[RMDB]
Chemical mapping of a 207-nucleotide RNA with 2A3 and DMS. Reactivities are given for positions 27 through 156. The DMS profile rests on 2,780 reads. Source: RMDB library RSTRND, as collected in RNAgym. For 2A3 the reverse transcriptase was SuperScript II with manganese. Conditions: 150 mM KOAc, 10 mM MgCl2 and 150 mM bicine (pH 8.5), 24 C.
RNA sequence: GGGAACGACUCGAGUAGAGUCGAAAAUGUGGAGGCUUGACGCAGCAAAAGAGAUUUAAAGCCCCGCAAAAUGUCGCUGUUUGAGACUGGCUUUGGCAUUUUGUUAAAUUUGAGAAAGUCCUAUGGUUGUAGACGUUGAUGUAGCAAGGUGUUUGGAACCACAACUAUAGUUCGCUAUAGUUGUGGUAAAAGAAACAACAACAACAAC
Reactivity to 2A3 in 0.01 (KOAc 150mM, MgCl2 10mM, bicine 150mM(pH8.5), 24C), signal-to-noise 2, nucleotides 027 to 156: u120g010u040g020g010a100g040g000c020u030u050g030a030c060g000c050a040g040c060a080a030a100a020g100a050g020a090u070u140u100a070a170a000g000c000c000c020c000g000c000a010a010a000a010u010g010u000c010g000c040u050g060u070u030u090g080a100g010a030c040u030g010g000c000u070u060u050g030g000c010a010u020u030u010u030g000u020u070a050a130a200u130u100u080g030a050g050a050a050a000g030u050c020c060u020a070u070g070g000u050u060g020u020a040g020a090c040g000u020u010g050a060u030g030u040a010g040c060a050a080g000g000u050g030u050u110u050g020g020a000
Reactivity to DMS in 0.01 (KOAc 150mM, MgCl2 10mM, bicine 150mM(pH8.5), 24C), signal-to-noise 1, nucleotides 027 to 156: u000g050u000g030g000a160g040g020c000u000u000g000a190c080g000c040a200g000c020a080a100a100a150g000a170g000a220u000u000u000a120a100a140g000c020c000c030c150g070c030a020a010a030a070u000g010u000c000g000c090u000g020u000u010u010g010a120g000a050c070u000g010g000c030u000u020u000g020g000c020a060u000u000u000u000g000u000u010a020a030a140u010u000u000g000a110g030a090a080a080g010u000c020c020u000a120u010g010g000u000u000g000u000a080g000a100c050g000u000u000g010a060u000g020u020a090g000c020a010a060g000g010u000g000u000u000u000g030g010a180